Conditions: 150 mM KOAc, 10 mM MgCl2 and 150 mM bicine (pH 8.5), 24 C.
Structure probing data (DMS and 2A3) for a 177-nucleotide construct.
The 2A3 profile rests on 1,488 reads.
DMS (dimethyl sulfate) methylates the pairing face of unpaired adenines and cytosines.
High 2A3 reactivity points to a flexible backbone, as in loops and unpaired stretches.
For DMS the reverse transcriptase was MarathonRT.
The data come from the RNA Mapping Database (RMDB), library OK2TRN.
RNA sequence: GGGAACGACUCGAGUAGAGUCGAAAAGCCAAGGAGAUGGGGCUUACUGAUGAAGCCAGAAAGCAGGUGCAAGCAUUGGCUAGCAACAUCGAGCAGGGGCAACAUUCAAUGCCCAUGCAACAACAGCUCCAUCCCACACUUUCGAGUGUGGGAUGGAAAAAGAAACAACAACAACAAC
Reactivity to DMS in 0.01 (KOAc 150mM, MgCl2 10mM, bicine 150mM(pH8.5), 24C), signal-to-noise 2, nucleotides 027 to 126: g020c020c000a120a120g020g000a160g010a030u010g030g000g000g020c010u000u000a110c070u020g000a020u000g010a080a140g000c020c020a080g000a060a070a110g000c070a050g030g000u000g000c130a100a120g030c000a060u000u000g000g060c010u000a090g000c080a050a060c020a020u000c030g040a240g000c010a040g010g010g000g000c000a060a060c180a060u000u000c290a090a120u000g000c000c010c000a050u000g000c020a070a060c080a020a020c190a060g000c080
Reactivity to 2A3 in 0.01 (KOAc 150mM, MgCl2 10mM, bicine 150mM(pH8.5), 24C), signal-to-noise 2, nucleotides 027 to 126: g060c010c000a080a010g180g020a120g010a010u030g010g000g020g000c030u050u000a020c020u040g030a060u020g020a060a020g030c010c030a040g130a080a170a020g030c150a060g120g110u130g130c100a130a090g020c000a000u020u130g010g020c010u010a020g040c010a010a090c010a020u060c030g020a030g000c020a000g000g020g000g000c000a090a000c000a170u210u300c100a100a090u030g010c000c000c000a000u010g000c030a050a090c020a050a010c000a010g000c000